[RMDB]
RNA sequence: GGGAACGACUCGAGUAGAGUCGAAAAUGGCGGUGAGGCAGACAGUUCGCUUAUCGCGCCGCUACUUGCCGGGGCGUUUGCCGAUCGCAUUGCUCGUCGCCGUGGGCAAGAUGGACGCUAUCAACUGCCGAACAUCUCGUUUCGACGAGAUGUUCGGAAAAGAAACAACAACAACAAC
Reactivity to DMS in 0.01 (KOAc 150mM, MgCl2 10mM, bicine 150mM(pH8.5), 24C), signal-to-noise 1, nucleotides 027 to 126: u020g000g020c010g000g000u010g010a070g000g030c030a020g020a220c130a110g000u000u010c150g040c000u000u000a020u020c010g010c030g000c000c000g000c040u000a020c290u000u010g000c120c020g000g000g000g020c000g010u000u000u000g000c050c020g000a020u000c080g020c140a120u000u000g010c000u000c000g020u000c020g020c020c000g040u000g000g010g000c020a120a030g000a080u010g010g010a160c060g000c070u010a040u000c080a100a110c120u010g010
Reactivity to 2A3 in 0.01 (KOAc 150mM, MgCl2 10mM, bicine 150mM(pH8.5), 24C), signal-to-noise 1, nucleotides 027 to 126: u080g000g000c000g020g040u020g040a110g040g200c000a000g060a120c030a030g090u020u030c010g040c060u050u010a060u220c020g010c030g060c070c010g000c040u180a210c090u060u160g090c110c010g030g000g060g000c030g000u000u000u040g150c170c070g000a010u000c020g020c150a060u010u070g000c030u000c010g000u000c010g000c000c020g010u050g000g000g000c040a000a040g030a040u100g100g000a050c080g000c070u030a070u180c050a060a060c030u080g020